[RMDB]
RNA sequence: GGGAACGACUCGAGUAGAGUCGAAAACUUUCAUCGUUUGACCGUUCGUGUGAAGUCUCCUGAAACGGAGCGCGAUACAGGGUGACAGCCCCGUAUCACGGACCAGUACGACGUGCGUCAGCUCCAGGUAGUUAUAAUAGUUCGCUAUUAUAACUACAAAAGAAACAACAACAACAAC
Reactivity to DMS in 0.01 (KOAc 150mM, MgCl2 10mM, bicine 150mM(pH8.5), 24C), signal-to-noise 9, nucleotides 027 to 126: c050u000u010u010c060a070u010c030g010u000u010u000g010a110c160c280g010u000u000c020g020u000g000u000g000a030a030g010u020c000u000c000c010u000g000a060a300a060c050g000g000a020g000c010g040c020g030a300u010a030c010a190g000g000g010u010g010a090c220a100g000c010c000c000c000g000u000a260u000c000a010c010g010g000a020c020c050a060g010u010a070c300g000a030c030g020u000g010c120g010u000c050a070g010c040u000c010c030a120g000
Reactivity to 2A3 in 0.01 (KOAc 150mM, MgCl2 10mM, bicine 150mM(pH8.5), 24C), signal-to-noise 9, nucleotides 027 to 126: c020u060u150u110c050a100u080c020g020u020u020u080g040a030c030c010g010u010u000c010g000u010g000u010g020a020a010g030u040c010u000c000c000u010g020a030a010a000c010g010g000a010g010c010g000c000g000a000u010a050c040a030g000g000g010u010g040a020c010a010g010c000c000c000c010g000u000a000u010c010a000c000g000g010a010c010c000a010g010u020a020c030g010a010c020g030u050g040c030g060u060c040a030g020c020u030c030c010a030g110
The data come from the RNA Mapping Database (RMDB), libraries RFM100 and RFMREP. An RNA of 177 nucleotides, treated with DMS and 2A3 and read out base by base. The RNA was probed in 150 mM KOAc, 10 mM MgCl2 and 150 mM bicine (pH 8.5) at 24 C.